Conditions: 150 mM KOAc, 10 mM MgCl2 and 150 mM bicine (pH 8.5), 24 C. Chemical mapping of a 177-nucleotide RNA with 2A3 and DMS. It was measured as part of the RMDB library RFMREP. Values cover nucleotides 27 to 126. DMS adducts were read by reverse transcription with MarathonRT.
RNA sequence: GGGAACGACUCGAGUAGAGUCGAAAAGUGCUCAAUCGUGUAGCGUUUGAGCGACGCUUUACUGACUUCAAGGAUGAAGGACGCGUCGCCGCCACCCUAGAGGCGGCAUCCCCCGCGUGACGCCCUCGCAGAUGAUGUUCUUCGGAACAUCAUCUGCAAAAGAAACAACAACAACAAC
Reactivity to 2A3 in 0.01 (KOAc 150mM, MgCl2 10mM, bicine 150mM(pH8.5), 24C), signal-to-noise 1, nucleotides 027 to 126: g050u020g030c000u030c040a020a010u060c040g010u070g110u260a110g100c030g000u000u010u040g010a000g000c000g000a020c010g020c000u080u140u220a100c140u050g020a000c010u030u030c080a170a090g200g080a160u090g040a040a020g000g000a030c010g010c000g030u000c010g000c000c040g000c000c000a100c050c000c000u130a100g030a080g100g000c000g010g040c010a020u060c010c010c020c000c020g000c000g000u020g000a000c030g020c010c000c000u020c070
Reactivity to DMS in 0.01 (KOAc 150mM, MgCl2 10mM, bicine 150mM(pH8.5), 24C), signal-to-noise 1, nucleotides 027 to 126: g000u010g050c010u010c040a070a000u000c010g040u010g010u000a140g050c000g000u000u000u010g050a030g020c020g030a020c020g000c020u000u010u000a220c080u020g000a270c090u010u010c070a070a130g020g000a070u010g010a110a070g010g010a160c130g000c020g010u000c020g010c010c000g020c000c000a130c070c080c050u000a070g020a140g000g010c010g030g000c010a050u000c010c010c020c020c020g000c060g020u000g000a090c080g000c000c030c030u010c130